An RNA of 207 nucleotides, treated with 2A3 and read out base by base. The data come from the RNA Mapping Database (RMDB), library RNAMAK. The reactions ran in a buffer of 150 mM KOAc, 10 mM MgCl2 and 150 mM bicine (pH 8.5), at 24 C. 2A3 adducts were read by reverse transcription with SuperScript II with manganese.
RNA sequence: GGGAACGACUCGAGUAGAGUCGAAAAGAUAUGGAGGCUUUCUCUAGCGUGAUCUUUGAUCAUAUGUAUGUGCAUAUCGGAAACGAUAUGGGCGAAGUAUGGGAGAUUCGGGAAGCCUCCUAAGUCAAAGAGAAUGCUAGUUCGCUAGCAUUCUCAAGGAAUUAUUGAGCUUCGGCUCAAUAAUUCCAAAAGAAACAACAACAACAAC
Reactivity to 2A3 in 0.01 (KOAc 150mM, MgCl2 10mM, bicine 150mM(pH8.5), 24C), signal-to-noise 2, nucleotides 027 to 156: g010a000u030a010u000g000g010a000g040g000c060u100u300u090c070u130c120u120a070g000c140g280u240g030a000u030c020u290u300u040g000a000u030c030a000u000a010u300g140u050a110u220g020u050g130c000a000u010a000u000c010g000g010a000a020a000c000g020a000u000a000u010g010g060g010c020g010a050a020g000u000a000u010g010g030g000a040g000a010u080u090c010g010g000g010a000a000g030c000c000u010c000c000u000a000a000g000u000c020a130a070a020g000a000g000a010a000u010g000c000u000a010g040u020u060c300g030c130u000a000g030c000a000u000u000c000u000c000a000a000